This 177-nucleotide RNA was probed chemically with DMS and 2A3. Reactivities are given for positions 27 through 126. The reactions ran in a buffer of 150 mM KOAc, 10 mM MgCl2 and 150 mM bicine (pH 8.5), at 24 C.
[RMDB]
RNA sequence: GGGAACGACUCGAGUAGAGUCGAAAAGCGAUCACCUGCAGCGUCAGCGUGGUUUUACCGGAAGAUUCCGGUCCGUAGAUUUCGACGAUACGGCCCAUCGGCAGACCACCUGCCCCAAGCGCGAUAAGCACCAUUUAAAUUUCGAUUUAAAUGGUGCAAAAGAAACAACAACAACAAC
Reactivity to DMS in 0.01 (KOAc 150mM, MgCl2 10mM, bicine 150mM(pH8.5), 24C), signal-to-noise 8, nucleotides 027 to 126: g020c140g010a040u000c020a040c020c010u000g000c060a160g020c160g020u000c020a020g010c170g010u000g000g010u000u000u010u010a040c010c000g010g010a070a210g000a190u010u000c020c020g000g000u000c040c020g010u010a050g010a140u000u000u000c070g020a120c080g010a210u000a030c010g010g010c050c010c030a100u010c100g000g020c060a050g000a140c110c120a090c120c010u000g000c020c010c080c080a060a100g010c040g020c030g010a060u020a060a150
Reactivity to 2A3 in 0.01 (KOAc 150mM, MgCl2 10mM, bicine 150mM(pH8.5), 24C), signal-to-noise 6, nucleotides 027 to 126: g060c040g020a020u030c020a010c030c010u020g020c030a160g140c040g170u230c030a010g020c040g080u030g010g010u020u010u070u080a010c000c000g000g030a120a090g200a290u240u060c020c020g000g000u000c000c010g040u030a020g000a190u080u120u100c110g060a110c030g000a040u020a030c000g010g000c000c020c000a080u110c030g010g000c010a000g000a070c010c050a040c020c040u020g000c010c000c000c010a090a050g050c040g010c010g070a030u070a130a030